[RMDB]
Source: RMDB library RNAMAK, as collected in RNAgym. Chemical mapping of a 207-nucleotide RNA with 2A3.
RNA sequence: GGGAACGACUCGAGUAGAGUCGAAAACCGUAGGCUUACGGUUGGCCGGUCAGCAACAGCUAUGGAUCAGUAUUCGAAAGAGUAAGUUCCAUAGACAUGCUGGAUUUCCAACGGUAAGCCUAAACGGAAAACCUAGACUUGUUCGCAAGUCUAGGAAGUGGUUCUACUACUUCGGUAGUAGAACCACAAAAGAAACAACAACAACAAC
Reactivity to 2A3 in 0.01 (KOAc 150mM, MgCl2 10mM, bicine 150mM(pH8.5), 24C), signal-to-noise 1, nucleotides 027 to 156: c010c000g010u020a000g000g010c000u010u010a010c030g220g000u010u020g000g000c040c050g150g030u060c000a000g000c010a020a120c010a100g040c000u000a000u010g000g000a010u000c020a150g170u040a030u000u000c010g070a120a110a090g010a040g010u010a050a040g000u020u000c000c000a000u000a000g040a080c000a020u030g000c000u020g040g040a020u090u090u010c010c000a010a000c030g130g000u000a000a000g000c000c000u010a030a010a010c000g040g000a060a100a010a030c000c000u010a010g000a000c000u000u010g000u080u140c170g060c140a010a000g010u000c000u000a000g000g010a000a020